Conditions: 150 mM KOAc, 10 mM MgCl2 and 150 mM bicine (pH 8.5), 24 C. This 177-nucleotide RNA was probed chemically with 2A3 and DMS.
RNA sequence: GGGAACGACUCGAGUAGAGUCGAAAACUCGGUUAAUUCGUUAACCGAGACUUCUUUAACAUCUUUUCAACACAUAGAUGGUAAAUAUUCAAAGAUGUUCGAAUGCGAUAAACUUCGGUUUAUCGAACGUGCGAACGUUGUUCGCAACGUUCGCACGAAAAGAAACAACAACAACAAC
Reactivity to 2A3 in 0.01 (KOAc 150mM, MgCl2 10mM, bicine 150mM(pH8.5), 24C), signal-to-noise 2, nucleotides 027 to 126: c000u000c020g000g020u000u060a020a000u100u080c080g070u020u020a000a000c010c000g000a030g000a000c000u040u150c020u000u130u070a000a000c000a020u000c030u050u070u090u080c070a100a090c030a050c040a100u290a210g140a250u070g050g030u100a050a100a050u300a170u150u140c060a030a000a000g010a060u000g040u000u070c070g130a160a090u120g070c010g000a000u020a030a000a000c000u020u040c100g050g020u010u000u010a010u000c000g000a020a030
Reactivity to DMS in 0.01 (KOAc 150mM, MgCl2 10mM, bicine 150mM(pH8.5), 24C), signal-to-noise 1, nucleotides 027 to 126: c000u000c010g000g000u010u000a000a070u000u030c270g000u010u010a010a000c010c000g000a010g030a080c110u010u000c040u000u000u020a010a010c000a020u000c000u000u000u000u000c060a050a040c070a090c190a130u050a060g010a110u010g000g000u000a040a110a080u000a110u010u010c150a020a020a020g000a030u000g010u000u000c160g010a030a110u010g010c010g000a010u000a000a010a020c000u020u000c160g000g000u020u000u000a000u000c000g000a020a060
2A3 adducts were read by reverse transcription with SuperScript II with manganese. The 2A3 profile rests on 877 reads. DMS adducts were read by reverse transcription with MarathonRT.